[RMDB]
RNA sequence: GGGAACGACUCGAGUAGAGUCGAAAAUUAUACCUGUGGCAUUGUCUUGAAAUAAGUUUCACCAUUUAAAUCCACUCUUCACAGGAAAAUCUGAAAUGCCCCAGGCUCACCAGCAAGCGAGGCCUGCGCACCAGGAAAAUUUCGAUUUUCCUGGUGCAAAAGAAACAACAACAACAAC
Reactivity to 2A3 in 0.01 (KOAc 150mM, MgCl2 10mM, bicine 150mM(pH8.5), 24C), signal-to-noise 4, nucleotides 027 to 126: u100u030a070u050a140c010c010u010g000u000g010g010c120a070u060u080g070u120c030u050u090g070a040a060a080u160a100a050g040u030u080u120c140a110c050c010a060u050u100u120a050a130a050u020c020c000a020c040u030c050u120u100c020a030c010a030g060g000a030a100a000a050u080c070u060g060a010a030a080u070g030c000c030c000c000a000g000g000c010u000c010a080c020c000a060g130c080a070a010g070c030g090a010g020g090c010c000u040g020c050
Reactivity to DMS in 0.01 (KOAc 150mM, MgCl2 10mM, bicine 150mM(pH8.5), 24C), signal-to-noise 2, nucleotides 027 to 126: u010u020a090u050a160c000c000u010g000u000g000g000c130a060u020u000g010u050c120u090u020g030a080a090a170u030a060a050g000u010u000u000c110a150c190c060a040u010u040u040a010a120a070u000c010c220a030c050u070c080u020u010c050a010c040a050g000g000a040a020a020a020u040c070u050g000a080a060a070u010g000c000c010c000c000a030g020g000c020u020c020a110c050c010a110g000c220a030a000g010c050g020a120g050g000c000c000u000g000c250

An RNA of 177 nucleotides, treated with 2A3 and DMS and read out base by base.
The RNA was probed in 150 mM KOAc, 10 mM MgCl2 and 150 mM bicine (pH 8.5) at 24 C.
The data come from the RNA Mapping Database (RMDB), library OK1LIB.